[RMDB]
RNA sequence: GGGAACGACUCGAGUAGAGUCGAAAAGAUAUGGACAGUUCAACAGCCUGUCGAUCGGAAACGAUCGCAGGACAUGAACGUCCUAAGUCAAAAGGCUAAAUUGGUAGUUCGCUACCAAUUUAGCCAACCAAAAAGGCUUGUUCGCAAGCCUUUUUGGAAAAGAAACAACAACAACAAC
Reactivity to 2A3 in 0.01 (KOAc 150mM, MgCl2 10mM, bicine 150mM(pH8.5), 24C), signal-to-noise 1, nucleotides 027 to 126: g020a000u070a000u050g020g000a000c180a180g030u020u000c050a130a110c060a250g080c010c000u130g290u300c080g000a000u020c000g000g030a020a060a050c020g010a010u010c000g000c000a000g000g000a010c010a080u000g000a000a000c000g000u010c010c010u020a110a000g080u040c010a170a040a040a060g000g000c010u000a010a010a010u000u000g040g020u010a010g050u040u080c300g030c210u010a010c000c000a010a000u000u010u000a000g010c010c000a000a000
Reactivity to DMS in 0.01 (KOAc 150mM, MgCl2 10mM, bicine 150mM(pH8.5), 24C), signal-to-noise 1, nucleotides 027 to 126: g030a030u010a300u000g000g010a000c000a080g010u000u000c000a000a100c160a200g020c020c000u000g010u000c040g010a000u000c000g000g010a060a080a190c010g010a000u000c000g000c000a010g020g000a000c050a140u000g000a000a000c000g010u000c000c050u000a000a130g000u010c020a090a070a140a130g000g040c010u020a000a020a010u000u000g000g000u000a000g020u000u010c190g000c000u000a010c000c000a010a000u000u000u010a000g020c000c000a000a040
The data come from the RNA Mapping Database (RMDB), library TTRDEL. The record gives the reactivity of an RNA of 177 nucleotides to 2A3 and DMS. Values are in units of 0.01, from 0 to 300, in steps of 10. The DMS profile rests on 1,139 reads. For DMS the reverse transcriptase was MarathonRT. The reactions ran in a buffer of 150 mM KOAc, 10 mM MgCl2 and 150 mM bicine (pH 8.5), at 24 C.